[RMDB]
Conditions: 150 mM KOAc, 10 mM MgCl2 and 150 mM bicine (pH 8.5), 24 C. Structure probing data (2A3 and DMS) for a 177-nucleotide construct. DMS adducts were read by reverse transcription with MarathonRT. For 2A3 the reverse transcriptase was SuperScript II with manganese.
RNA sequence: GGGAACGACUCGAGUAGAGUCGAAAAGAUAUGGAUCCUCCGCACAACGAGGAUCUCGGAAACGAGGGAGUUGACGGAGGGAUCCUAAGUCAAAAGCGUGGAUGGGAGUUCGCUCCCAUCCACGCAAGAAUAUCCUCCUCUUCGGAGGAGGAUAUUCAAAAGAAACAACAACAACAAC
Reactivity to 2A3 in 0.01 (KOAc 150mM, MgCl2 10mM, bicine 150mM(pH8.5), 24C), signal-to-noise 1, nucleotides 027 to 126: g000a030u110a100u140g000g020a010u020c010c000u050c020c000g180c030a300c020a300a000c020g030a150g040g100a020u000c010u000c000g030g000a070a060a000c010g000a010g000g050g010a070g000u030u030g000a050c010g000g090a110g130g030g010a000u030c000c000u030a070a010g060u010c030a010a060a000a190g030c000g000u000g000g040a020u000g070g030g000a020g020u160u230c290g100c130u000c000c040c000a000u010c000c000a000c020g000c000a000a000
Reactivity to DMS in 0.01 (KOAc 150mM, MgCl2 10mM, bicine 150mM(pH8.5), 24C), signal-to-noise 2, nucleotides 027 to 126: g000a040u000a300u010g020g000a030u000c000c000u000c000c000g000c050a070c000a010a030c000g000a110g010g000a040u010c000u000c000g000g000a110a100a210c010g000a030g000g010g000a030g030u000u010g010a300c020g000g000a040g010g030g000a020u000c000c000u010a040a150g000u010c060a080a090a120a150g000c000g030u000g000g010a030u000g010g010g000a020g020u000u000c240g010c020u000c010c000c000a000u010c000c000a000c020g010c000a000a010